Annotation:
Conditions: 150 mM KOAc, 10 mM MgCl2 and 150 mM bicine (pH 8.5), 24 C. An RNA of 177 nucleotides, treated with 2A3 and DMS and read out base by base. The DMS profile rests on 2,009 reads. The 2A3 profile rests on 2,862 reads. Source: RMDB library TTRDEL, as collected in RNAgym.
RNA sequence: GGGAACGACUCGAGUAGAGUCGAAAAGAUAUGGAUCUAUGCAAGCGCCUAUUCGGAAACGAAUAGAAGCGUGAUGACCAUAGAGUCCUAAGUCAAAUCUUUGCGCGUGUUCGCACGCGCAAAGAAACAUGCUAUGAACGUUCGCGUUCAUAGCAUGAAAAGAAACAACAACAACAAC
Reactivity to 2A3 in 0.01 (KOAc 150mM, MgCl2 10mM, bicine 150mM(pH8.5), 24C), signal-to-noise 1, nucleotides 027 to 126: g000a000u010a000u040g010g000a010u000c000u000a000u000g000c000a040a030g000c010g000c010c010u020a000u000u020c000g000g000a010a000a000c000g030a010a010u010a010g040a160a170g020c010g000u020g020a130u000g000a000c010c020a020u000a010g020a000g210u140c000c010u000a000a000g010u000c000a000a100a300u050c010u030u000u010g000c030g000c000g000u030g080u100u080c300g000c160a000c000g040c000g030c000a000a010a010g000a000a000a000
Reactivity to DMS in 0.01 (KOAc 150mM, MgCl2 10mM, bicine 150mM(pH8.5), 24C), signal-to-noise 3, nucleotides 027 to 126: g010a020u000a000u020g000g000a300u010c000u000a020u000g000c010a030a000g030c000g020c000c000u000a010u000u000c000g030g020a020a010a010c000g020a010a000u000a010g020a070a090g040c000g050u000g020a030u020g000a260c300c000a000u000a010g000a060g020u000c000c000u000a010a080g000u010c000a120a100a100u010c000u000u000u000g010c010g010c000g040u000g010u010u010c230g010c000a000c040g000c010g030c010a010a000a010g010a030a140a210